Chemical mapping of a 207-nucleotide RNA with 2A3. Values are in units of 0.01, from 0 to 300, in steps of 10. The data come from the RNA Mapping Database (RMDB), library OK3TST.
RNA sequence: GGGAACGACUCGAGUAGAGUCGAAAACAGAAGAGCCUGACUCACUCAGGCUCAGUCUUUCUAUUAUUUCUUAAAGCAUCUAAGACCCCACGCUUUCUCAGUGAAGUGGCUUGUAGCUACCAAUUACGAGCAAUUGUCUCCUCCAAAGGCACCAAUACAUCCCAGGAUAUUUCGAUAUCCUGGGAUGAAAAGAAACAACAACAACAAC
Reactivity to 2A3 in 0.01 (KOAc 150mM, MgCl2 10mM, bicine 150mM(pH8.5), 24C), signal-to-noise 1, nucleotides 027 to 156: c040a020g180a140a000g010a150g000c000c000u010g030a010c050u010c300a090c030u010c000a010g000g010c000u000c000a000g020u000c020u010u060u000c020u030a150u100u020a120u070u210u060c020u010u250a120a120a010g010c000a080u000c080u080a100a000g010a050c000c010c030c020a020c020g040c000u010u150u040c060u000c030a070g040u110g090a130a030g030u020g020g000c020u030u060g050u040a020g000c000u040a080c010c000a070a130u070u110a050c050g050a020g030c020a050a020u120u030g030u050c030u040c090c010u000c010c050a050a000a000g000g000c010a030c000c000a000a000u020a120